[RMDB]
RNA sequence: GGGAACGACUCGAGUAGAGUCGAAAAGAUAUGGACCGACAAAGGCGAUAAGAUGCUCGGAAACGAGGCAUCUUUUGACGCCUGAGGCGGUCCUAAGUCAAAAUCGACUGUCUUCGGACAGUCGAAACGGUAAAUAUGACUUCGGUCAUAUUUACCGAAAAGAAACAACAACAACAAC
Reactivity to 2A3 in 0.01 (KOAc 150mM, MgCl2 10mM, bicine 150mM(pH8.5), 24C), signal-to-noise 3, nucleotides 027 to 126: g030a000u050a020u130g000g000a000c000c000g000a030c020a000a070a000g000g010c030g010a010u010a110a000g000a010u010g010c000u010c020g040g050a070a050a050c020g020a040g130g140c000a000u000c000u010u000u020u050g080a050c020g030c000c000u000g000a030g040g020c000g000g000u000c000c000u010a030a010g020u000c020a020a010a020a300u040c000g000a000c000u010g010u000c000u030u070c300g160g010a000c020a010g010u000c000g010a000a010a000
Reactivity to DMS in 0.01 (KOAc 150mM, MgCl2 10mM, bicine 150mM(pH8.5), 24C), signal-to-noise 6, nucleotides 027 to 126: g000a040u000a300u010g000g000a020c000c000g020a020c020a030a200a010g010g020c010g020a170u010a020a010g010a000u000g010c000u000c010g010g000a080a100a220c000g010a030g010g020c010a000u000c000u000u000u000u000g010a160c060g010c000c000u000g000a300g010g010c010g000g000u000c000c000u000a010a080g000u000c030a080a040a110a080u000c010g000a020c000u000g000u000c000u000u010c260g010g010a010c010a000g010u000c000g000a000a020a070
This 177-nucleotide RNA was probed chemically with 2A3 and DMS. Reactivities are given for positions 27 through 126. For 2A3 the reverse transcriptase was SuperScript II with manganese. For 2A3, 11,245 sequencing reads were counted. The reactions ran in a buffer of 150 mM KOAc, 10 mM MgCl2 and 150 mM bicine (pH 8.5), at 24 C. For DMS, 7,620 sequencing reads were counted.